[RMDB]
Chemical mapping of a 177-nucleotide RNA with 2A3 and DMS.
RNA sequence: GGGAACGACUCGAGUAGAGUCGAAAAGAAAGAGCCAUGGCCAGAGGCUAUGUUAUGCCCUACAUACAAGACUGCUGUGCCUAGCACAACAAACAAGGUAGCAAUGCACACGUCCAUUGCAGCAGGCGACUGCCAUCUACUUCGGUAGAUGGCAGUCAAAAGAAACAACAACAACAAC
Reactivity to 2A3 in 0.01 (KOAc 150mM, MgCl2 10mM, bicine 150mM(pH8.5), 24C), signal-to-noise 2, nucleotides 027 to 126: g030a020a050a010g070a020g100c000c060a020u020g000g010c000c010a100g070a070g110g000c000u040a020u110g110u170u060a110u110g010c020c050c020u070a030c040a100u210a040c040a080a060g100a040c000u050g010c020u030g120u100g070c010c040u020a040g030c030a030c000a150a040c020a040a130a000c010a020a130g070g020u120a050g060c040a020a050u010g000c040a030c000a030c150g040u000c020c000a040u030u050g000c020a010g000c030a000g050g070c040
Reactivity to DMS in 0.01 (KOAc 150mM, MgCl2 10mM, bicine 150mM(pH8.5), 24C), signal-to-noise 1, nucleotides 027 to 126: g010a020a130a090g000a110g020c130c060a040u000g000g000c020c010a150g030a080g010g010c000u000a030u000g010u010u000a030u010g000c060c040c010u000a170c150a080u000a010c140a060a040g010a070c080u000g000c040u000g020u000g020c000c040u010a180g010c010a060c070a040a060c130a030a050a080c290a130a020g000g000u030a080g010c050a060a100u000g000c070a030c110a070c090g000u000c080c030a020u000u010g060c000a150g000c050a040g010g000c070

Values cover nucleotides 27 to 126. DMS adducts were read by reverse transcription with MarathonRT.